RNA sequence: GGGAACGACUCGAGUAGAGUCGAAAAGGACAGCGCAAUCUUGAAUGUUGACAUGGAACAUUUCCAAAAGCAUGCAAUGAGCUAUGUGUAUGUUGAAACCUGCGACCAAAAACUUGCCUGCUUGUAGAUUGGGUUUUCUUUCUAGAAAAUGCCCAAAAAUACUCCUAGGGUUCGCCCUAGGAGUAUUAAAAGAAACAACAACAACAAC
Reactivity to 2A3 in 0.01 (KOAc 150mM, MgCl2 10mM, bicine 150mM(pH8.5), 24C), signal-to-noise 2, nucleotides 027 to 156: g020g020a010c010a000g020c100g030c070a030a080u030c020u030u060g050a120a080u060g010u030u030g040a100c100a180u150g000g030a080a020c030a210u080u120u050c020c020a050a070a050a020g020c020a000u040g040c020a010a120u130g000a040g060c040u150a080u030g040u010g040u030a190u000g100u040u030g000a110a060a020c020c020u120g030c050g020a040c030c000a050a060a090a090a060c020u020u000g020c000c000u040g030c020u090u040g050u090a050g030a120u030u010g040g000g040u040u010u030u010c000u020u190u020c020u070a030g030a060a070a040a020u140g020c140c000c140a010a190a000
Reactivity to DMS in 0.01 (KOAc 150mM, MgCl2 10mM, bicine 150mM(pH8.5), 24C), signal-to-noise 2, nucleotides 027 to 156: g010g010a070c020a040g020c030g010c070a080a060u010c040u010u000g020a100a040u000g020u000u000g010a190c070a110u010g010g030a120a110c060a130u000u010u010c040c060a060a080a150a090g010c030a010u000g000c020a040a040u020g000a070g020c050u000a080u000g020u000g030u000a070u000g000u020u000g010a110a090a120c030c040u000g050c030g000a190c030c030a070a110a080a070a090c080u010u000g010c010c020u000g010c040u000u000g020u010a100g020a220u000u010g030g020g040u000u000u000u000c010u010u000u010c160u000a100g000a060a040a030a080u020g000c000c020c000a000a050a090